[RMDB]
RNA sequence: GGGAACGACUCGAGUAGAGUCGAAAAAAAGAGUUGUGGAUGGUGAUACAUUUAUUGCAAAUCAAAAUGGUAAAGAAAUUAAAGUUAGGCUUAUAGGGGUUGAUACGCCAGAAACGGUGAAACCGAAGUAUCAUCACCGUUUCGACGGUGAUGAUACAAAAGAAACAACAACAACAAC
Reactivity to DMS in 0.01 (KOAc 150mM, MgCl2 10mM, bicine 150mM(pH8.5), 24C), signal-to-noise 1, nucleotides 027 to 126: a010a050a060g030a080g010u000u000g030u000g010g010a090u020g000g010u010g000a060u010a050c050a030u000u010u010a050u050u020g040c140a050a070a080u000c030a010a010a040a040u010g000g000u020a050a060a080g020a010a040a100u000u000a020a060a080g010u000u000a050g010g000c020u000u000a070u000a130g020g000g000g000u020u000g000a160u010a070c080g000c020c010a050g030a050a020a120c070g010g000u000g000a060a030a150c070c070g000a090a080